The record gives the reactivity of an RNA of 177 nucleotides to 2A3 and DMS. The reactions ran in a buffer of 150 mM KOAc, 10 mM MgCl2 and 150 mM bicine (pH 8.5), at 24 C. For DMS the reverse transcriptase was MarathonRT.
RNA sequence: GGGAACGACUCGAGUAGAGUCGAAAACGUCGUCGACCCGCGCCGUUCCAGCUUCCACUCUUUCGCUCACACGCACGGCGCCUCCCCCACAGUUCUCCGAUUCCAAUUUUCCGCAAGGAAUGUCAUCCGUUCAACUAAGGUUCGCCUUAGUUGAACGAAAAGAAACAACAACAACAAC
Reactivity to 2A3 in 0.01 (KOAc 150mM, MgCl2 10mM, bicine 150mM(pH8.5), 24C), signal-to-noise 1, nucleotides 027 to 126: c000g050u030c010g000u030c030g070a150c010c040c030g050c030g010c020c010g040u060u070c030c000a020g000c020u050u000c020c020a080c050u120c000u060u130u140c070g020c030u040c040a080c000a000c030g000c030a010c000g000g000c000g010c020c000u030c030c000c020c020c010a020c000a010g010u020u000c020u010c000c040g060a060u050u090c010c010a040a030u080u050u050u000c000c000g020c040a070a000g010g000a050a010u040g080u000c020a120u000c020
Reactivity to DMS in 0.01 (KOAc 150mM, MgCl2 10mM, bicine 150mM(pH8.5), 24C), signal-to-noise 1, nucleotides 027 to 126: c120g000u000c030g020u000c050g010a110c030c020c040g000c150g010c030c010g000u000u000c010c040a120g030c050u010u010c020c050a060c080u000c080u000u000u000c040g000c010u010c080a090c110a090c140g020c080a060c040g000g000c050g010c040c010u000c000c010c000c010c000a020c080a120g000u010u020c000u020c000c040g000a090u000u000c000c050a060a120u000u010u000u000c000c000g000c200a100a180g000g000a030a020u000g010u010c080a150u000c100

2A3 adducts were read by reverse transcription with SuperScript II with manganese.